An RNA of 177 nucleotides, treated with DMS and 2A3 and read out base by base. 2A3 adducts were read by reverse transcription with SuperScript II with manganese.
[RMDB]
RNA sequence: GGGAACGACUCGAGUAGAGUCGAAAAGAAGGCACUUUCGAGUGCCUUCAUGGGGAGCUCAGGUCUCCCUCCCUUGCAAACUCCCUAAGGGUGGAGACCUAAUUAGGUGCACUUUCGAGUGCACCAACUCUUGAGUGUGUUUCGACACACUCAAGAGAAAAGAAACAACAACAACAAC
Reactivity to DMS in 0.01 (KOAc 150mM, MgCl2 10mM, bicine 150mM(pH8.5), 24C), signal-to-noise 1, nucleotides 027 to 126: g000a020a000g020g000c000a000c000u010u000u010c180g000a010g020u000g000c000c000u010u000c000a010u000g000g020g000g000a020g000c050u020c180a000g000g010u000c010u000c000c000c040u000c000c000c010u000u000g030c190a100a090a120c180u000c010c000c020u030a100a100g010g010g000u000g000g000a020g030a020c000c000u000a130a080u010u000a110g020g010u000g000c000a000c000u000u000u010c220g020a040g000u000g000c000a010c000c000a020a050
Reactivity to 2A3 in 0.01 (KOAc 150mM, MgCl2 10mM, bicine 150mM(pH8.5), 24C), signal-to-noise 2, nucleotides 027 to 126: g000a010a000g010g010c020a000c040u030u050u200c290g060a010g000u000g000c010c010u010u000c010a010u000g000g000g000g000a020g010c060u060c250a000g050g010u030c000u000c000c020c010u040c000c000c010u000u050g070c060a090a090a130c040u090c020c020c010u100a060a040g180g000g050u070g040g000a010g000a000c000c010u020a030a100u140u190a050g000g000u000g000c010a000c020u070u050u110c250g110a020g000u000g000c000a000c000c000a000a000